[RMDB]
RNA sequence: GGGAACGACUCGAGUAGAGUCGAAAAGAUAUGGAAAGUCGAGCUCCUCAGGCCAAUUGUGGCCCUAUAGUCGGAAACGACUAUAGGGCCACAGAGCCUAGGGAGCUAAGACAGCUUUCCUAAGUCACAACAUUGUAAUCUUCGGAUUACAAUGUUGAAAAGAAACAACAACAACAAC
Reactivity to DMS in 0.01 (KOAc 150mM, MgCl2 10mM, bicine 150mM(pH8.5), 24C), signal-to-noise 1, nucleotides 027 to 126: g010a070u010a300u030g020g020a000a010a030g000u010c110g000a010g010c020u000c010c000u000c110a010g000g010c010c060a140a180u010u010g040u020g000g080c020c040c000u010a000u000a020g050u010c000g000g010a170a100a300c040g050a040c020u020a020u000a020g000g030g000c050c000a000c000a000g000a120g000c000c000u010a000g000g010g010a000g020c000u000a000a030g020a050c300a060g010c030u000u000u000c000c010u020a070a120g000u000c030a290